[RMDB]
RNA sequence: GGGAACGACUCGAGUAGAGUCGAAAAGGUCGGGCUGGAUGAUGGACUCCACGCCCCUGUAAGGCGUCCCAGUGUAGCCGAUAAUGCGGAGUUCCUUCCCGUACACUGACCGGGCGCGGGCCUGUAACGUUCGGAUGAUGAUCGUAUAACUGGAGCGCUUAAUGUAGUUUUUCGAAACUACAUUAAGAAAAGAAACAACAACAACAAC
Reactivity to DMS in 0.01 (KOAc 150mM, MgCl2 10mM, bicine 150mM(pH8.5), 24C), signal-to-noise 3, nucleotides 027 to 156: g030g040u010c030g020g000g020c030u000g010g010a080u000g020a160u010g020g010a080c050u010c020c020a050c040g010c000c000c010c000u010g000u000a100a070g010g010c010g010u000c030c010c030a090g030u000g000u000a070g020c080c010g010a120u010a090a130u010g000c070g030g010a130g000u010u000c060c040u000u000c000c000c000g020u000a070c040a070c020u010g020a110c080c060g000g010g020c020g020c000g000g010g010c030c030u000g010u000a100a080c060g010u000u000c020g020g010a160u000g010a120u000g000a090u010c030g020u000a100u010a070a100c050u000g000g000a080g010c050g020
Reactivity to 2A3 in 0.01 (KOAc 150mM, MgCl2 10mM, bicine 150mM(pH8.5), 24C), signal-to-noise 5, nucleotides 027 to 156: g020g010u060c030g010g000g000c020u010g010g010a030u080g030a080u100g110g070a060c040u000c010c010a020c090g010c000c000c000c010u040g100u180a090a030g060g000c000g010u040c020c020c000a020g010u020g010u040a040g080c080c020g030a090u150a150a100u230g060c070g010g010a030g030u100u110c030c000u060u030c020c010c000g010u020a020c030a020c050u030g040a080c110c000g000g000g000c020g000c030g010g000g000c000c010u050g060u090a070a030c040g030u050u030c020g040g010a050u070g010a030u070g020a020u140c040g000u110a060u050a210a060c050u070g040g010a020g080c080g010